[RMDB]
RNA sequence: GGGAACGACUCGAGUAGAGUCGAAAAAGGUACAUGUCUGUUUUCUUUAAAACACAGAACCAUAAAAAUGCACGGUUGCAAUUGUAACAGAGUGUCGGGACACCUCUCGGCAGUGAGGUCCUCUGGAGCUACAUUAGAUUUUCGAAUCUAAUGUAGCAAAAGAAACAACAACAACAAC
Reactivity to DMS in 0.01 (KOAc 150mM, MgCl2 10mM, bicine 150mM(pH8.5), 24C), signal-to-noise 7, nucleotides 027 to 126: a070g010g000u000a070c090a100u000g010u000c090u000g010u000u000u010u000c150u010u010u000a040a050a050a050c080a040c060a050g000a080a100c040c020a100u000a010a070a060a090a070u000g000c040a050c090g010g010u010u000g010c030a140a110u010u010g010u000a040a060c050a060g010a080g030u000g020u000c080g000g000g000a070c140a070c130c040u000c010u000c040g010g010c090a050g000u000g000a050g010g010u010c060c030u000c030u010g010g010a300
Reactivity to 2A3 in 0.01 (KOAc 150mM, MgCl2 10mM, bicine 150mM(pH8.5), 24C), signal-to-noise 6, nucleotides 027 to 126: a000g070g010u070a050c060a090u060g040u030c050u020g020u070u060u050u020c000u040u200u150a070a080a040a010c070a000c010a040g060a060a040c020c000a030u180a090a140a030a020a010u150g020c040a010c080g090g000u040u050g010c050a180a300u140u170g030u060a040a030c020a020g120a030g130u030g050u060c050g010g000g010a020c040a030c080c010u000c010u020c040g130g010c020a020g020u020g040a020g000g020u040c000c010u050c030u030g020g030a030
Chemical mapping of a 177-nucleotide RNA with DMS and 2A3. The data come from the RNA Mapping Database (RMDB), library OK2TST. The 2A3 profile rests on 8,661 reads. The reactions ran in a buffer of 150 mM KOAc, 10 mM MgCl2 and 150 mM bicine (pH 8.5), at 24 C.